Structure probing data (DMS and 2A3) for a 177-nucleotide construct. Source: RMDB library RFM100, as collected in RNAgym.
RNA sequence: GGGAACGACUCGAGUAGAGUCGAAAACGGGCCUGCGAGACGGCCCGCACAUCCAAGGACGGCAGCAGGCGCGGAACUUGCCCAAUGCGCGGCGCGCGAGGCAGCGACGGGGAGCGCGCGAGCGAGGACGAUUUCCUUACUUCGGUAAGGAAAUCGUAAAAGAAACAACAACAACAAC
Reactivity to DMS in 0.01 (KOAc 150mM, MgCl2 10mM, bicine 150mM(pH8.5), 24C), signal-to-noise 2, nucleotides 027 to 126: c030g000g000g020c020c000u030g000c050g000a250g020a090c110g030g020c060c000c120g000c070a030c270a070u020c020c030a220a160g000g000a080c010g030g000c080a200g000c030a020g010g030c040g010c010g020g000a050a170c100u040u020g020c000c000c010a280a070u030g000c000g000c000g000g000c010g000c000g000c060g000a250g000g020c050a040g020c040g030a000c040g000g010g000g000a240g000c000g000c000g010c020g000a080g030c070g030a300g020g020
Reactivity to 2A3 in 0.01 (KOAc 150mM, MgCl2 10mM, bicine 150mM(pH8.5), 24C), signal-to-noise 2, nucleotides 027 to 126: c000g000g090g110c000c000u060g010c050g020a140g040a100c050g040g040c000c000c000g000c000a020c000a010u010c080c020a000a040g060g000a010c010g020g010c030a000g010c020a030g040g020c030g000c000g140g010a020a020c040u070u170g010c000c000c050a050a060u280g040c030g000c000g080g000c000g000c040g000c000g000a050g020g040c070a030g030c060g110a090c020g000g020g010g030a040g000c010g000c010g000c000g010a000g000c000g030a060g030g030